[RMDB]
RNA sequence: GGGAACGACUCGAGUAGAGUCGAAAACCCCAUUGGUUGGGAAAAGUCCCGGAACCAGGAAAUGGGAAAGAGACGGUAGAAAAGAGCGAGCCUCCCAGUUUUCGAGUAGUCCCGGACCUAUCUAAAUUGCCCGCCCGGUUCGCCGGGCGGAAAAGAAACAACAACAACAAC
Reactivity to DMS in 0.01 (KOAc 150mM, MgCl2 10mM, bicine 150mM(pH8.5), 24C), signal-to-noise 2, nucleotides 027 to 129: c100c010c000c060a260u000u000g020g000u000u000g000g000g010a000a080a160a300g000u090c000c000c160g000g150a080a140c000c060a080g000g120a060a000a120u000g000g020g000a020a210a000g000a100g010a090c220g000g040u000a190g060a140a140a060a190g010a090g010c030g000a000g050c150c010u000c070c020c020a210g000u000u010u040u220c020g000a150g030u120a010g000u030c030c040c040g050g030a010c000c110u000a040u030c080u020a000a130a010u150u020g060c120
Reactivity to 2A3 in 0.01 (KOAc 150mM, MgCl2 10mM, bicine 150mM(pH8.5), 24C), signal-to-noise 1, nucleotides 027 to 129: c000c000c000c000a040u000u260g040g000u000u030g000g000g000a000a000a000a000g070u030c200c000c000g020g030a020a020c000c000a000g040g000a010a090a000u110g000g040g000a030a020a000g010a000g000a000c000g110g070u200a140g060a080a000a040a000g080a000g000c060g050a000g000c000c010u000c000c000c000a000g070u060u000u000u110c150g000a100g000u170a000g100u090c030c000c000g000g000a000c000c000u110a180u080c080u050a000a210a130u170u160g000c170
This 170-nucleotide RNA was probed chemically with DMS and 2A3. DMS adducts were read by reverse transcription with MarathonRT. The reactions ran in a buffer of 150 mM KOAc, 10 mM MgCl2 and 150 mM bicine (pH 8.5), at 24 C. Values cover nucleotides 27 to 129.